[RMDB]
RNA sequence: GGGAACGACUCGAGUAGAGUCGAAAAGAUAUGGACGUGACCCAGCGCGAAACACCGACAUCGGAAACGAUGUCUUUGGGUGGAGCUGCACGUCCUAAGUCAAAAGUUCUUGCUUCGGCAAGAACAACCUUUGUCUAAGGUUCGCCUUAGACAAAGGAAAAGAAACAACAACAACAAC
Reactivity to 2A3 in 0.01 (KOAc 150mM, MgCl2 10mM, bicine 150mM(pH8.5), 24C), signal-to-noise 4, nucleotides 027 to 126: g010a010u010a000u040g010g000a010c010g000u030g070a150c080c100c070a030g000c040g020c150g300a300a300a070c030a010c020c010g000a010c010a000u000c010g010g030a010a010a000c000g000a000u000g000u000c000u070u130u090g120g000g000u070g050g090a070g000c000u010g010c000a000c000g020u010c000c010u000a000a000g000u000c020a000a030a130a130g000u010u000c000u000u000g020c000u060u090c300g120g000c000a010a000g000a000a010c010a000a000
Reactivity to DMS in 0.01 (KOAc 150mM, MgCl2 10mM, bicine 150mM(pH8.5), 24C), signal-to-noise 5, nucleotides 027 to 126: g010a020u000a050u000g000g000a010c010g000u000g000a220c290c300c140a020g020c020g030c180g010a140a130a150c010a020c030c010g010a010c000a000u000c000g010g010a020a010a050c000g010a010u000g000u000c000u000u000u010g030g000g010u000g020g010a160g010c000u000g010c010a010c010g020u000c000c000u010a010a110g000u000c020a090a090a110a120g020u000u000c000u000u010g010c010u000u000c250g030g000c010a000a010g000a010a000c000a090a100